This 177-nucleotide RNA was probed chemically with 2A3. The reactions ran in a buffer of 150 mM KOAc, 10 mM MgCl2 and 150 mM bicine (pH 8.5), at 24 C. The 2A3 profile rests on 223 reads. It was measured as part of the RMDB library OK1LIB. For 2A3 the reverse transcriptase was SuperScript II with manganese.
[RMDB]
RNA sequence: GGGAACGACUCGAGUAGAGUCGAAAAUAACAUUUUUAUUAAUAGCUCAAAUUGCUUUAUUAGUAUUAGAAUCAGCUGUAGCUAUAAUUCAAUCUUAUGUGUUUGCUGUAUUAAGAACUUUAUAUUCUCUGCAGAACAAAUUCGUUUGUUCUGCAGAAAAAGAAACAACAACAACAAC
Reactivity to 2A3 in 0.01 (KOAc 150mM, MgCl2 10mM, bicine 150mM(pH8.5), 24C), signal-to-noise 1, nucleotides 027 to 126: u060a080a010c040a060u080u080u130u080u110a000u110u140a250a040u000a020g020c000u020c100a000a230a300u140u000g020c000u010u150u170a100u080u150a000g080u000a130u270u000a110g200a190a080u140c100a200g000c040u040g060u190a000g000c000u040a060u000a000a020u000u100c030a080a100u040c020u070u210a060u100g210u000g140u040u200u280g000c160u120g050u160a160u040u100a150a000g020a020a000c020u000u240u010a140u000a000u130u080c080